RNA sequence: GGGAACGACUCGAGUAGAGUCGAAAAGCAUGCUUCCUUUUGACCAUCUUUGCAUGUGACGAGUUCGCUCGUCAUUUCAUGCAGCAUGCGAAACGUCCGCUGAUGGUCAAGGAAUUGCGGACGGAAAGGGAACCAUCCAGUUCGCUGGAUGGUUCCCAAAAGAAACAACAACAACAAC
Reactivity to 2A3 in 0.01 (KOAc 150mM, MgCl2 10mM, bicine 150mM(pH8.5), 24C), signal-to-noise 2, nucleotides 027 to 126: g000c020a030u030g000c010u080u100c030c060u190u080u080u040g010a000c010c000a000u020c000u120u180u090g010c000a000u000g000u050g010a000c000g010a000g000u030u220c290g050c140u010c000g020u030c000a000u060u100u000c010a010u000g030c030a010g000c000a000u050g000c000g000a040a120a010c040g060u010c010c000g010c030u030g000a030u010g000g010u020c020a000a170g010g020a050a000u160u030g000c020g000g000a000c030g040g100a110a080a080
This 177-nucleotide RNA was probed chemically with 2A3.
The RNA was probed in 150 mM KOAc, 10 mM MgCl2 and 150 mM bicine (pH 8.5) at 24 C.
The 2A3 profile rests on 1,230 reads.
It was measured as part of the RMDB library OK1LIB.